Conditions: 150 mM KOAc, 10 mM MgCl2 and 150 mM bicine (pH 8.5), 24 C. This 207-nucleotide RNA was probed chemically with 2A3. For 2A3, 968 sequencing reads were counted. It was measured as part of the RMDB library OK3TST.

RNA sequence: GGGAACGACUCGAGUAGAGUCGAAAACAAGCCGGUGUGGCGUCGGCGCUCUCCGGUGGACGCUGAGUGGUCCCUUCAGCUCUGGGCCGCUGAUCCUCGCAAGUUCGGGCCGGCUCGCCGGUUCCGGGUGGUCGUGGACGAGUCGCCGGUGCAGGCGGCUGUGCUACCAUUUCGAUGGUAGCACAGCAAAAGAAACAACAACAACAAC
Reactivity to 2A3 in 0.01 (KOAc 150mM, MgCl2 10mM, bicine 150mM(pH8.5), 24C), signal-to-noise 2, nucleotides 027 to 156: c060a040a040g020c000c000g160g090u180g090u110g240g030c020g000u020c030g030g010c020g000c020u040c010u010c030c070g000g080u110g050g040a020c050g000c070u070g020a020g020u070g010g050u160c000c000c000u110u110c030a050g030c040u070c060u100g090g060g020c000c000g020c030u000g030a160u000c010c010u030c010g030c110a150a020g010u010u010c020g000g020g020c000c000g030g000c000u110c100g080c010c050g010g060u300u180c010c000g000g000g010u080g000g030u270c030g020u070g000g000a010c060g000a000g060u140c030g010c020c020g010g000u000g000c000a010g020g040c030g000